Background:
Conditions: 150 mM KOAc, 10 mM MgCl2 and 150 mM bicine (pH 8.5), 24 C. The record gives the reactivity of an RNA of 177 nucleotides to 2A3 and DMS. For DMS, 3,269 sequencing reads were counted. It was measured as part of the RMDB library OK2TRN.

[RMDB]
RNA sequence: GGGAACGACUCGAGUAGAGUCGAAAAUAAUUUGGAUUGAUGGAGCAAUAAAAUGGGCACAUGGGGCUGUAGGAGUUUUGAGAACGAUAGUGCAUUAGAUUGGGUUUAUCUACUCCAGAAGCAUGACCUUAGCUCAACAUUUCGAUGUUGAGCUAAGAAAAGAAACAACAACAACAAC
Reactivity to 2A3 in 0.01 (KOAc 150mM, MgCl2 10mM, bicine 150mM(pH8.5), 24C), signal-to-noise 2, nucleotides 027 to 126: u110a010a070u050u050u110g060g020a030u030u080g020a010u050g020g050a030g000c010a080a010u110a150a090a030a030u090g030g020g000c040a020c010a070u060g020g010g040g020c020u030g010u050a050g010g090a030g020u090u120u120u090g080a050g000a000a000c040g010a060u030a090g090u090g000c020a030u070u110a020g080a100u060u070g080g000g000u010u060u030a090u060c000u020a030c010u000c000c000a020g020a070a020g030c040a020u110g010a030c010
Reactivity to DMS in 0.01 (KOAc 150mM, MgCl2 10mM, bicine 150mM(pH8.5), 24C), signal-to-noise 3, nucleotides 027 to 126: u010a090a080u010u010u000g010g000a100u000u000g000a090u000g000g010a070g010c040a070a070u000a050a050a060a070u020g010g010g030c040a040c090a100u010g010g000g010g010c040u000g000u000a070g000g000a080g010u010u000u000u000g010a100g020a050a060c080g010a070u010a080g020u010g010c030a070u000u010a060g000a090u030u010g000g000g010u010u010u000a080u010c060u000a040c060u000c000c040a080g010a110a060g020c080a050u000g000a150c180